The record gives the reactivity of an RNA of 177 nucleotides to DMS and 2A3. The reactions ran in a buffer of 150 mM KOAc, 10 mM MgCl2 and 150 mM bicine (pH 8.5), at 24 C. For 2A3, 1,976 sequencing reads were counted.
RNA sequence: GGGAACGACUCGAGUAGAGUCGAAAAGAAGCAAAGCAAGGCAAAAGCAAAAGCAGAAGCUGAAAUCGAAAAUCGAGAGAGAGGCAAGAGAUCGGAUUCUCCGUACCGCUCCCACUCGCAGUCGCGCAGGUAUAGCAGGAUUCGUCCUGCUAUACCUAAAAGAAACAACAACAACAAC
Reactivity to DMS in 0.01 (KOAc 150mM, MgCl2 10mM, bicine 150mM(pH8.5), 24C), signal-to-noise 3, nucleotides 027 to 126: g020a160a070g000c040a050a190a130g000c060a050a100g020g000c060a040a070a180a180g000c020a070a060a100a180g000c020a030g000a110a100g000c030u000g000a020a050a110u000c070g020a030a030a130a090u000c060g000a060g010a070g000a070g000a030g010g010c050a150a070g000a030g010a040u000c100g010g000a110u000u000c050u000c020c040g010u000a190c050c040g020c020u000c010c020c070a050c050u000c010g000c180a040g010u000c030g000c090g020c170
Reactivity to 2A3 in 0.01 (KOAc 150mM, MgCl2 10mM, bicine 150mM(pH8.5), 24C), signal-to-noise 2, nucleotides 027 to 126: g040a030a020g010c040a070a000a000g010c010a010a060g110g000c030a050a210a080a090g020c000a110a130a030a010g000c000a010g020a140a020g000c020u030g000a060a000a020u040c000g080a050a000a010a150u060c040g040a030g020a010g010a010g000a010g110g040c010a060a020g020a000g010a060u110c100g110g040a060u160u030c020u000c030c030g050u060a060c010c030g030c000u020c020c000c010a000c000u020c020g010c030a000g030u050c020g000c010g000c120